Chemical mapping of a 177-nucleotide RNA with 2A3 and DMS. The reactions ran in a buffer of 150 mM KOAc, 10 mM MgCl2 and 150 mM bicine (pH 8.5), at 24 C. The 2A3 profile rests on 733 reads.
[RMDB]
RNA sequence: GGGAACGACUCGAGUAGAGUCGAAAAGAAUCAUAAUCAUUUACCGGAUCAGAGUCGACUUGGCGGCUUUCCAGCGCAAAUUAGACAAAGUCGACUUUCACGCUCGAAAGUUUUGCGCUUAAGAAUAAUUACCUCGUACCUUCGGGUACGAGGUAAUAAAAGAAACAACAACAACAAC
Reactivity to 2A3 in 0.01 (KOAc 150mM, MgCl2 10mM, bicine 150mM(pH8.5), 24C), signal-to-noise 2, nucleotides 027 to 126: g050a050a160u200c090a000u160a080a070u020c030a080u040u110u080a160c060c080g020g000a060u130c080a010g050a000g040u000c000g000a010c000u060u180g120g080c000g070g050c000u040u030u020c010c000a010g000c010g000c060a020a070a070u150u050a050g000a030c050a000a090a000g080u010c000g040a000c000u020u030u010c120a050c010g070c040u040c020g010a030a030a050g040u050u020u040u070g020c000g000c040u050u060a060a010g000a090a040u070a010
Reactivity to DMS in 0.01 (KOAc 150mM, MgCl2 10mM, bicine 150mM(pH8.5), 24C), signal-to-noise 1, nucleotides 027 to 126: g000a140a020u020c000a030u080a120a060u000c030a060u030u000u040a090c040c010g030g010a020u010c120a130g020a010g060u000c020g000a090c060u000u000g000g000c050g000g020c120u010u020u050c070c140a060g010c000g050c100a020a000a060u040u000a070g070a090c140a010a160a010g000u010c000g000a080c000u000u000u050c000a000c240g010c060u010c080g000a050a070a110g020u000u000u000u000g000c000g020c000u020u040a190a080g000a100a070u020a080